[RMDB]
RNA sequence: GGGAACGACUCGAGUAGAGUCGAAAAAGUAGGAAUAGAAAUCUUAAAUACCAUACAAUUUAUGCACGAGCAAGGAUAUUCUCACGGAGACAUUAAAGCGAGCAAUAUAGUCUUGGAUCAAAUGGAUAAGAAUAAAUUAUAUCUAGUGGAUUACGGAUCGUAAUAUGGAGUUCGCUCCAUAUUACGAAAAAGAAACAACAACAACAAC
Reactivity to DMS in 0.01 (KOAc 150mM, MgCl2 10mM, bicine 150mM(pH8.5), 24C), signal-to-noise 1, nucleotides 027 to 156: a060g000u010a100g040g020a060a110u000a090g020a080a070a080u010c010u020u000a020a060a100u010a130c030c010a150u000a110c020a000a110u010u000u000a070u010g010c070a130c040g010a120g040c040a070a100g020g010a070u000a060u000u000c040u010c020a030c120g000g000a230g030a080c050a090u010u000a060a030a150g000c050g030a040g020c070a060a070u000a070u000a040g020u000c030u000u010g010g000a160u000c010a050a060a040u000g000g030a150u000a040a130g010a080a100u000a070a010a050u000u000a120u000a040u000c030u000a070g040u010g010g010a100u010u010a060c000g010g010a250
Reactivity to 2A3 in 0.01 (KOAc 150mM, MgCl2 10mM, bicine 150mM(pH8.5), 24C), signal-to-noise 2, nucleotides 027 to 156: a020g090u090a030g020g030a030a030u050a050g060a070a080a030u090c020u080u070a110a130a080u140a110c040c000a010u110a110c040a100a140u100u140u090a090u150g010c020a010c100g020a050g000c060a010a010g010g000a000u000a060u190u090c060u020c010a070c060g040g000a040g000a040c040a040u090u140a070a060a010g020c040g020a000g000c030a020a000u030a030u010a190g050u020c000u000u020g020g010a030u040c050a000a090a300u040g010g000a030u050a080a080g000a040a050u120a090a090a020u270u140a090u040a010u110c020u020a010g050u010g020g000a020u030u130a030c020g020g030a040

Chemical mapping of a 207-nucleotide RNA with DMS and 2A3.
Reactivities are given for positions 27 through 156.
The DMS profile rests on 1,913 reads.
2A3 adducts were read by reverse transcription with SuperScript II with manganese.
For 2A3, 1,086 sequencing reads were counted.
It was measured as part of the RMDB library OK3TST.